[RMDB]
RNA sequence: GGGAACGACUCGAGUAGAGUCGAAAAGGAGCUUGAUUCGUCAAGCUCCAAAAGUUACAGACCCCAUUCCUAGGGUAAACAAGAAGCUAUGCACCGAGGCAAAAAGGAAUGGAUUCGUCCAUUCCAAGUUACCAGGAAGUUUCGACUUCCUGGUAACAAAAGAAACAACAACAACAAC
Reactivity to 2A3 in 0.01 (KOAc 150mM, MgCl2 10mM, bicine 150mM(pH8.5), 24C), signal-to-noise 2, nucleotides 027 to 126: g000g010a000g010c030u020u010g000a010u020u020c000g040u030c040a000a000g000c000u000c010c000a000a000a000a000g000u000u050a050c020a030g150a120c000c000c010c010a020u020u040c010c020u040a030g010g000g050u040a070a070a000c060a030a040g140a110a000g000c060u060a030u130g010c040a040c070c050g040a030g050g030c030a030a050a030a010a070g020g020a010a000u010g000g040a030u030u060c160g040u070c020c000a000u000u000c010c000a000a000
Reactivity to DMS in 0.01 (KOAc 150mM, MgCl2 10mM, bicine 150mM(pH8.5), 24C), signal-to-noise 2, nucleotides 027 to 126: g000g000a010g010c000u000u000g000a050u000u020c240g030u000c000a020a000g000c000u020c000c000a010a010a060a070g020u000u010a090c150a140g000a100c010c030c000c010a090u000u000c000c000u000a090g000g010g020u020a060a070a070c120a050a120g010a050a030g010c060u000a050u000g020c080a120c080c030g000a050g000g000c140a020a060a060a080a110g010g000a000a020u000g010g000a010u000u010c150g000u000c000c000a000u000u010c000c000a040a070

The record gives the reactivity of an RNA of 177 nucleotides to 2A3 and DMS.
The data come from the RNA Mapping Database (RMDB), library M2PK50.
For 2A3, 2,326 sequencing reads were counted.